[RMDB]
RNA sequence: GGGAACGACUCGAGUAGAGUCGAAAAUCUGUUCCCUUCGGGGAACAGAACUGCGCCUGGACUUAAAGCCAUUGCACUUAAGAAAAUAAACAAUCAAAAUAAGCCCUUCUGGUUUCGACCAGAAGAAUGUUAGUAAACAGUUCGCUGUUUACUAACAAAAAGAAACAACAACAACAAC
Reactivity to 2A3 in 0.01 (KOAc 150mM, MgCl2 10mM, bicine 150mM(pH8.5), 24C), signal-to-noise 3, nucleotides 027 to 126: u020c000u000g000u000u020c020c000c000u000u030c180g040g000g000g000a000a000c010a000g010a010a020c010u080g030c030g020c020c010u030g000g040a110c010u090u100a100a050a040g000c030c030a070u060u180g020c030a020c040u080u040a120a000g060a110a130a060a060u200a060a120a040c020a040a120u170c050a040a100a060a170u120a130a080g020c040c010c000u000u000c000u000g010g010u040u040u120c180g040a000c000c000a010g010a000a000g000a000a010
Reactivity to DMS in 0.01 (KOAc 150mM, MgCl2 10mM, bicine 150mM(pH8.5), 24C), signal-to-noise 3, nucleotides 027 to 126: u000c000u000g010u010u000c000c000c000u010u000c150g030g010g000g010a000a010c010a010g010a050a080c100u010g010c160g010c020c040u000g020g010a090c040u000u010a050a050a160g000c110c070a040u000u000g030c040a100c090u010u010a040a090g000a110a070a060a050u010a050a070a070c080a070a030u000c050a030a110a070a080u010a040a100g010c110c070c010u010u000c000u000g000g010u000u000u020c140g010a020c000c010a020g000a010a000g000a070a060